[RMDB]
RNA sequence: GGGAACGACUCGAGUAGAGUCGAAAAGGUCCGUUGCUAAUCCUUCGGAUGUAAUCAUUGGCGGCGCUUCUGCGCCCCGGGGCUGGUGAUGAAACAAAGCAAAUGCCAGUACGAUGGCGACAGGCGCAUAGCCGUAAGGAUUCGUCCUUACGGCUAUAAAAGAAACAACAACAACAAC
Reactivity to DMS in 0.01 (KOAc 150mM, MgCl2 10mM, bicine 150mM(pH8.5), 24C), signal-to-noise 8, nucleotides 027 to 126: g000g000u000c000c000g020u020u000g000c040u020a110a090u020c290c010u010u000c030g010g010a030u010g010u020a090a090u020c070a170u010u010g010g000c090g030g010c020g000c010u020u020c100u020g010c010g000c010c020c130c020g000g010g000g000c010u010g000g010u000g000a300u010g010a070a070a100c210a080a090a150g000c060a040a060a140u030g010c000c000a010g010u010a090c050g000a060u000g000g000c000g010a070c110a030g010g000c020g010c070
Reactivity to 2A3 in 0.01 (KOAc 150mM, MgCl2 10mM, bicine 150mM(pH8.5), 24C), signal-to-noise 9, nucleotides 027 to 126: g080g010u010c020c010g000u010u020g020c060u070a060a100u130c010c010u020u030c010g020g020a040u040g100u170a100a100u110c090a130u060u140g110g020c080g010g000c000g010c010u200u160c040u150g000c010g000c000c000c000c010g010g000g070g000c000u020g000g050u040g030a080u050g050a110a080a110c110a120a110a000g100c030a060a040a030u150g010c010c010a000g010u020a050c040g040a080u150g000g010c000g030a050c020a020g000g020c010g000c020